[RMDB]
RNA sequence: GGGAACGACUCGAGUAGAGUCGAAAAACACUGCUACUUUAAACCUUUUCAGGCCACAGGGCCUAAAAGACUUUCUUGAACCUGGUAGCAAAUUUUGGGACUAAAGCUGGUUUAAAGUUAUGGUUCCGUUAAGCAUUAAGUUCGCUUAAUGCUUAACAAAAGAAACAACAACAACAAC
Reactivity to DMS in 0.01 (KOAc 150mM, MgCl2 10mM, bicine 150mM(pH8.5), 24C), signal-to-noise 9, nucleotides 027 to 126: a080c090a080c210u000g010c020u000a020c010u000u000u000a040a060a080c080c010u010u010u000u000c240a010g010g010c010c010a190c300a130g010g020g020c010c010u000a010a000a010a020g010a070c100u000u010u000c130u010u000g010a090a100c130c100u000g010g010u000a010g010c020a060a100a130u000u000u010u000g010g010g000a020c010u000a040a070a060g010c010u000g000g000u010u000u010a050a060a020g010u000u000a130u000g010g000u000u000c010c030
Reactivity to 2A3 in 0.01 (KOAc 150mM, MgCl2 10mM, bicine 150mM(pH8.5), 24C), signal-to-noise 9, nucleotides 027 to 126: a000c040a010c060u050g010c000u020a010c010u090u110u150a080a050a030c010c000u040u020u030u070c140a010g000g010c010c010a160c130a210g230g090g000c000c010u010a010a000a000a000g020a020c030u120u160u080c040u110u200g050a070a060c000c040u040g030g000u010a000g000c000a020a010a030u100u110u050u050g010g000g000a000c010u020a060a050a040g010c010u030g020g180u120u160u300a100a170a010g000u020u010a070u130g010g000u020u000c000c010
The data come from the RNA Mapping Database (RMDB), library OK2TST. Structure probing data (DMS and 2A3) for a 177-nucleotide construct. For DMS, 14,017 sequencing reads were counted. For 2A3 the reverse transcriptase was SuperScript II with manganese. Values cover nucleotides 27 to 126. Conditions: 150 mM KOAc, 10 mM MgCl2 and 150 mM bicine (pH 8.5), 24 C. DMS adducts were read by reverse transcription with MarathonRT.